Chemical mapping of a 207-nucleotide RNA with 2A3 and DMS. The reactions ran in a buffer of 150 mM KOAc, 10 mM MgCl2 and 150 mM bicine (pH 8.5), at 24 C. Values cover nucleotides 27 to 156. The 2A3 profile rests on 2,596 reads.

[RMDB]
RNA sequence: GGGAACGACUCGAGUAGAGUCGAAAAGCGUACUACAGAGCGAUGAAAUGCCGAGGAUCUAUGGGAGGAUACUCCCAAAUAGGAGUAUCUGACCAUAGGGAGGCAUAACCGCUCUGUAUCGCAAAGUACAAAUUGUCCUUCGGGACAAUUUGUACAAGAUACCAAGUGACUUCGGUCACUUGGUAUCAAAAGAAACAACAACAACAAC
Reactivity to 2A3 in 0.01 (KOAc 150mM, MgCl2 10mM, bicine 150mM(pH8.5), 24C), signal-to-noise 2, nucleotides 027 to 156: g010c020g020u110a090c050u000a000c020a000g010a000g060c010g020a050u140g080a210a200a000u010g010c000c000g050a140g020g020a020u020c000u020a010u010g020g020g010a030g010g030a000u020a000c010u020c000c030c100a080a100a070u300a080g000g000a000g000u000a000u000c000u020g020a010c020c000a000u000a000g000g000g000a000g000g010c000a000u010a000a020c000c000g010c000u020c000u000g000u030a000u050c000g000c010a040a040a010g020u000a000c000a010a000a000u000u000g000u000c020c000u000u070c300g000g000g000a000c000a000a000u000u010u000g000u000a000c000a000a000
Reactivity to DMS in 0.01 (KOAc 150mM, MgCl2 10mM, bicine 150mM(pH8.5), 24C), signal-to-noise 1, nucleotides 027 to 156: g000c010g030u030a110c040u000a000c000a000g000a070g000c050g030a070u010g030a040a300a050u000g000c000c010g020a130g030g000a020u020c030u010a020u000g020g000g010a300g060g020a070u000a030c000u010c000c050c050a000a080a060u010a090g000g010a010g000u000a000u000c030u020g010a300c000c000a010u000a000g010g040g030a030g020g000c020a010u010a070a010c000c030g000c040u000c010u000g010u000a000u020c040g000c020a070a050a100g000u000a030c000a000a010a010u000u020g050u000c000c020u020u000c300g000g010g010a030c000a030a000u000u000u000g070u010a050c000a040a070